[RMDB]
RNA sequence: GGGAACGACUCGAGUAGAGUCGAAAACGUCAGGUGUUCCUCCCCCCGAGAGGGGACGAGUGAGGCUUAUCCCGGGGAACUCGGCGAAUCGUCCCCACAUAGCAGCUCCGGGAGCCCCCUUCAAAAACAACAUAUAGUGCUUCGGCACUAUAUGUUGAAAAGAAACAACAACAACAAC
Reactivity to DMS in 0.01 (KOAc 150mM, MgCl2 10mM, bicine 150mM(pH8.5), 24C), signal-to-noise 1, nucleotides 027 to 126: c040g000u020c170a080g060g010u010g000u000u000c000c000u000c010c020c000c010c000c020g020a190g020a100g030g020g000g020a010c050g000a020g010u010g060a060g020g000c060u000u000a140u000c000c000c020g070g000g010g010a080a110c090u000c070g000g040c090g000a080a070u000c030g010u000c000c000c000c000a050c140a080u000a090g010c070a070g010c030u000c000c020g000g010g000a060g000c000c000c010c020c040u010u020c100a030a080a090a050a060
An RNA of 177 nucleotides, treated with DMS and read out base by base. The RNA was probed in 150 mM KOAc, 10 mM MgCl2 and 150 mM bicine (pH 8.5) at 24 C. Source: RMDB library VIROID, as collected in RNAgym. For DMS the reverse transcriptase was MarathonRT. The DMS profile rests on 846 reads.